[RMDB]
An RNA of 177 nucleotides, treated with DMS and 2A3 and read out base by base. Conditions: 150 mM KOAc, 10 mM MgCl2 and 150 mM bicine (pH 8.5), 24 C. For 2A3 the reverse transcriptase was SuperScript II with manganese.

RNA sequence: GGGAACGACUCGAGUAGAGUCGAAAAUAAAGGAGUGGGGCCAGCCAAAGUCAAAGAUUACCCACUUGAUCUUUUGCACCACAAGUGGUGUGGACAUGCCUGGUGCUGAUUACCAACUCACCAAACACGAUGAUUAUGCAUUCGUGCAUAAUCAUCGAAAAGAAACAACAACAACAAC
Reactivity to DMS in 0.01 (KOAc 150mM, MgCl2 10mM, bicine 150mM(pH8.5), 24C), signal-to-noise 2, nucleotides 027 to 126: u030a090a140a090g020g000a030g030u010g000g010g010g010c210c030a020g010c020c030a150a080a040g000u010c020a070a060a070g000a190u000u000a070c040c020c020a050c040u000u000g000a050u030c050u000u000u010u010g000c120a140c110c120a090c040a020a070g010u000g010g000u010g040u000g000g020a070c140a040u000g020c120c020u000g000g010u000g030c010u000g000a050u000u000a110c020c030a050a050c020u000c010a140c040c030a080a130a080c230a090
Reactivity to 2A3 in 0.01 (KOAc 150mM, MgCl2 10mM, bicine 150mM(pH8.5), 24C), signal-to-noise 2, nucleotides 027 to 126: u120a010a060a020g080g000a030g010u050g000g030g000g020c010c010a000g000c020c040a100a060a020g010u020c000a000a060a100g040a060u020u060a060c000c000c000a040c000u010u030g030a070u040c030u080u270u130u210g040c060a050c050c000a030c060a110a040g030u020g020g050u130g030u040g030g010a050c030a040u040g010c000c000u030g040g000u150g000c050u030g000a060u000u120a140c000c000a020a060c020u000c000a050c030c000a030a080a020c090a010
It was measured as part of the RMDB library OK2TST.